Chemical mapping of a 177-nucleotide RNA with DMS. The RNA was probed in 150 mM KOAc, 10 mM MgCl2 and 150 mM bicine (pH 8.5) at 24 C.
RNA sequence: GGGAACGACUCGAGUAGAGUCGAAAAAGCAACAGGUUGUGCACUGCACAACUCCAAGGGGUGCCAGUCACAUUGCAGACUCUGUGAAUGGUGACCCCUUGAGUUGUGCAGUGUACAGUCUGUACAAUCCUCCUUUAUUCUUCGGAAUAAAGGAGGAAAAAGAAACAACAACAACAAC
Reactivity to DMS in 0.01 (KOAc 150mM, MgCl2 10mM, bicine 150mM(pH8.5), 24C), signal-to-noise 2, nucleotides 027 to 126: a110g010c150a120a030c010a010g010g010u000u000g010u000g010c000a010c000u010g000c000a020c000a010a000c000u010c110c130a010a000g010g000g000g020u000g000c010c000a020g000u000c000a000c010a020u010u000g010c160a160g010a120c100u000c070u000g010u000g000a010a030u000g010g010u000g000a040c000c000c000c000u000u000g000a000g010u000u000g010u000g000c000a010g010u000g000u000a000c000a010g000u000c000u010g000u000a050c170a100a110